Source information
The data come from the RNA Mapping Database (RMDB), library OK2TST. The record gives the reactivity of an RNA of 177 nucleotides to DMS and 2A3. The DMS profile rests on 2,321 reads. Conditions: 150 mM KOAc, 10 mM MgCl2 and 150 mM bicine (pH 8.5), 24 C.
RNA sequence: GGGAACGACUCGAGUAGAGUCGAAAAACAAGCUCGGCCUGCCGGACGGCGCGUUUCCGUGCCAUUACGUGCCGGGCACGCACGCGCACUUCGCGGCCGUGCGGCACGGGCUCGGCUAUGCGAUGGACCAUGAUGCAGGUUUCGACCUGCAUCAUGGAAAAGAAACAACAACAACAAC
Reactivity to DMS in 0.01 (KOAc 150mM, MgCl2 10mM, bicine 150mM(pH8.5), 24C), signal-to-noise 2, nucleotides 027 to 126: a070c050a110a050g030c010u010c100g000g000c040c020u020g000c050c000g000g010a030c050g010g000c010g010c010g030u010u010u000c130c060g000u010g060c020c040a100u010u000a140c210g020u010g000c050c060g030g000g010c100a010c040g030c030a140c120g020c090g000c130a080c100u000u020c110g020c000g000g020c010c010g030u000g000c020g000g000c010a050c140g010g000g000c010u010c160g000g000c000u000a040u010g010c060g000a110u010g000g020a300
Reactivity to 2A3 in 0.01 (KOAc 150mM, MgCl2 10mM, bicine 150mM(pH8.5), 24C), signal-to-noise 3, nucleotides 027 to 126: a000c030a020a000g010c010u040c120g030g030c000c020u020g030c040c000g030g110a010c010g010g020c030g000c000g010u010u020u060c040c020g050u120g020c020c010a210u270u300a060c060g020u090g000c010c060g030g020g020c010a000c000g000c000a050c090g030c000g050c020a080c090u170u100c140g000c000g090g060c000c020g000u020g020c020g020g000c020a070c100g080g000g000c010u010c030g010g010c020u040a110u170g050c070g100a060u110g080g010a040